[RMDB]
RNA sequence: GGGAACGACUCGAGUAGAGUCGAAAACUGAUUUCUCCUCGAUAGUCGAUAAUGUCGUUAUUAGAGACUGCGAGGGCACUCUGAAAGUGGAUAGAGGCGAUGUGGUAAUUCCUGUCGUUAGGUCAUCUCUUCCCGUUCUAUUCGUAGAACGGGAAGAAAAAGAAACAACAACAACAAC
Reactivity to 2A3 in 0.01 (KOAc 150mM, MgCl2 10mM, bicine 150mM(pH8.5), 24C), signal-to-noise 3, nucleotides 027 to 126: c010u000g020a090u030u130u030c080u050c020c000u020c010g200a300u080a100g000u010c000g020a030u020a030a010u040g150u170c140g080u140u210a040u020u030a000g010a020g000a010c010u000g000c000g000a030g020g010g000c020a040c050u070c040u090g150a160a180a070g080u080g070g000a050u040a080g040a010g010g040c020g000a010u030g080u170g110g050u050a080a140u240u240c000c000u010g000u010c020g030u000u090a040g000g070u060c030a050u060c030
Reactivity to DMS in 0.01 (KOAc 150mM, MgCl2 10mM, bicine 150mM(pH8.5), 24C), signal-to-noise 4, nucleotides 027 to 126: c060u000g000a130u000u000u000c080u000c010c010u000c000g020a080u010a010g020u000c000g000a220u000a000a020u000g020u010c300g010u010u020a030u010u000a000g000a300g000a020c020u000g000c010g010a020g020g010g020c120a030c060u000c050u000g010a040a100a040g010u020g000g000a070u000a070g010a080g000g000c010g010a050u000g000u000g010g010u010a090a110u000u000c010c000u000g010u000c040g010u000u000a040g010g010u000c070a100u000c080
Chemical mapping of a 177-nucleotide RNA with 2A3 and DMS. For DMS, 3,823 sequencing reads were counted. The RNA was probed in 150 mM KOAc, 10 mM MgCl2 and 150 mM bicine (pH 8.5) at 24 C. For 2A3 the reverse transcriptase was SuperScript II with manganese. For 2A3, 2,167 sequencing reads were counted. Values cover nucleotides 27 to 126.